The record gives the reactivity of an RNA of 177 nucleotides to DMS and 2A3.
RNA sequence: GGGAACGACUCGAGUAGAGUCGAAAAACCAUUCUCAGUCAAGGGUAUGUGAGUACCUGUUCUCCCCUGCCAGAAUCUCAAACGAGCUCUCUGUAAAAAUCACAAGAUUUUAUUGUGCAUGGUAGCACCCCCUAUGCAUCUUCGGAUGCAUAGGGGGAAAAGAAACAACAACAACAAC
Reactivity to DMS in 0.01 (KOAc 150mM, MgCl2 10mM, bicine 150mM(pH8.5), 24C), signal-to-noise 1, nucleotides 027 to 126: a140c050c050a140u000u000c010u080c000a140g000u000c140a090a080g000g010g050u020a000u030g010u050g000a140g000u000a010c000c010u000g000u010u000c070u030c010c000c050c010u000g050c000c000a010g000a230a030u030c000u010c030a040a050a140c200g000a050g010c010u000c030u010c010u040g010u030a000a000a060a020a000u000c020a130c220a100a200g000a090u010u000u040u040a120u050u030g000u000g000c080a060u010g020g000u000a080g000c180a190
Reactivity to 2A3 in 0.01 (KOAc 150mM, MgCl2 10mM, bicine 150mM(pH8.5), 24C), signal-to-noise 2, nucleotides 027 to 126: a000c020c000a180u090u040c020u050c020a040g130u060c130a010a140g060g060g020u020a020u080g200u030g020a060g000u010a040c000c000u040g050u150u030c020u030c000c000c030c000u000g000c040c000a060g010a010a090u010c030u000c010a150a160a000c060g000a010g020c010u010c030u020c000u030g010u030a110a000a000a000a000u120c020a060c020a090a050g030a080u110u140u000u040a130u110u100g000u000g010c020a000u050g190g000u010a000g050c000a030

Values are in units of 0.01, from 0 to 300, in steps of 10.
It was measured as part of the RMDB library RFM100.
2A3 adducts were read by reverse transcription with SuperScript II with manganese.
The 2A3 profile rests on 749 reads.
The reactions ran in a buffer of 150 mM KOAc, 10 mM MgCl2 and 150 mM bicine (pH 8.5), at 24 C.
For DMS the reverse transcriptase was MarathonRT.